Chemical mapping of a 177-nucleotide RNA with DMS and 2A3.
RNA sequence: GGGAACGACUCGAGUAGAGUCGAAAAAAGGUGCGAUCAUAUCGGUUAAGAACUCUUAACUCUGAUGGCUUUCGAGUUAUGUGGUGCAUUGAAGCUCUCCCUUCAAAUGGUCGUACAGUUCCGUGAACUCCACUUUGGAAUUCGUUCCAAAGUGGAGAAAAGAAACAACAACAACAAC
Reactivity to DMS in 0.01 (KOAc 150mM, MgCl2 10mM, bicine 150mM(pH8.5), 24C), signal-to-noise 3, nucleotides 027 to 126: a050a040g010g000u000g000c020g000a020u000c010a030u000a100u000c130g000g000u000u000a060a050g010a150a080c150u000c020u000u000a010a020c000u000c030u010g020a040u000g030g010c200u010u000u000c080g000a020g000u000u000a020u000g010u010g000g010u000g000c090a160u000u000g000a070a040g010c130u000c100u000c110c110c020u000u000c080a020a030a030u000g010g000u000c000g010u000a020c020a040g000u000u000c000c000g030u000g010a070a180
Reactivity to 2A3 in 0.01 (KOAc 150mM, MgCl2 10mM, bicine 150mM(pH8.5), 24C), signal-to-noise 3, nucleotides 027 to 126: a000a000g100g000u020g000c000g000a000u010c000a000u040a030u130c070g070g030u120u060a080a040g030a100a040c010u000c000u100u010a010a010c000u000c120u190g050a060u040g160g140c000u070u120u070c020g020a000g000u040u040a040u060g090u140g050g040u060g010c050a110u040u120g030a020a020g000c000u010c010u070c100c000c000u000u010c030a070a060a020u010g010g010u010c000g000u010a010c020a020g010u010u000c000c030g030u060g070a040a020
For 2A3 the reverse transcriptase was SuperScript II with manganese. It was measured as part of the RMDB library M2PK90.